[RMDB]
The record gives the reactivity of an RNA of 177 nucleotides to 2A3 and DMS.
Reactivities are given for positions 27 through 126.
High DMS reactivity at an A or C suggests that its Watson-Crick edge is free.
The 2A3 profile rests on 11,134 reads.
It was measured as part of the RMDB library M2PK90.
Conditions: 150 mM KOAc, 10 mM MgCl2 and 150 mM bicine (pH 8.5), 24 C.
For DMS the reverse transcriptase was MarathonRT.

RNA sequence: GGGAACGACUCGAGUAGAGUCGAAAAUUAAAGAACUAUGAUCUGCACUGAACAAGUCACGGUGGUCGGAAACGACGCCGAAAGGCCAGGUCAUAGUUCCGACGUGAAGACUUGACGGGUCAAAAAACAAAUAGCUAUAGUUCGCUAUAGCUAUUUGAAAAGAAACAACAACAACAAC
Reactivity to 2A3 in 0.01 (KOAc 150mM, MgCl2 10mM, bicine 150mM(pH8.5), 24C), signal-to-noise 3, nucleotides 027 to 126: u100u070a090a030a020g000a000a000c000u000a010u010g000a010u000c000u010g010c010a000c020u030g030a150a030c070a210a070g080u100c060a030c090g000g000u020g010g000u000c000g000g010a030a050a020c010g000a000c000g010c000c010g040a040a020a000g000g000c020c010a000g010g000u000c000a000u000a000g000u000u000c000c010g010a010c040g150u030g040a100a020g000a020c000u010u020g020a030c010g010g030g000u030c000a050a090a030a000a000a020
Reactivity to DMS in 0.01 (KOAc 150mM, MgCl2 10mM, bicine 150mM(pH8.5), 24C), signal-to-noise 6, nucleotides 027 to 126: u010u000a080a120a050g010a020a010c010u000a010u000g000a010u010c000u000g000c020a020c020u000g020a090a120c070a040a050g010u000c120a300c030g010g010u000g010g020u000c000g010g000a110a080a170c010g010a010c000g000c010c000g000a040a050a110g010g000c020c030a000g010g000u000c000a000u010a010g000u000u000c000c030g010a130c170g000u000g000a090a140g010a010c000u000u000g000a300c020g010g010g010u000c010a010a030a060a090a080a120